[RMDB]
Structure probing data (DMS) for a 177-nucleotide construct.
RNA sequence: GGGAACGACUCGAGUAGAGUCGAAAAUGAAAGCUGUGUGAGCGAGGCGGGCGGAGGAUGAGGCCGUGCCCGGGCUCUGGCUGCAGCCGCCCGGGGACACGCCGUGCACCCUGGGGCUCCGGAAAAAACGUGCACUCAAAUUCGUUUGAGUGCACGUAAAAGAAACAACAACAACAAC
Reactivity to DMS in 0.01 (KOAc 150mM, MgCl2 10mM, bicine 150mM(pH8.5), 24C), signal-to-noise 1, nucleotides 027 to 126: u010g000a120a130a070g000c030u020g010u020g010u010g010a070g040c090g000a060g010g000c090g000g000g000c060g010g000a110g000g030a060u000g000a100g000g000c030c060g020u010g010c000c000c000g000g030g010c050u000c140u000g010g000c060u000g000c190a090g010c020c060g010c000c000c010g010g000g000g010a050c030a030c110g010c010c010g010u000g010c070a100c020c020c020u020g040g000g000g000c020u000c050c030g000g000a000a080a020a040a040
Source: RMDB library M2PK90, as collected in RNAgym. Conditions: 150 mM KOAc, 10 mM MgCl2 and 150 mM bicine (pH 8.5), 24 C.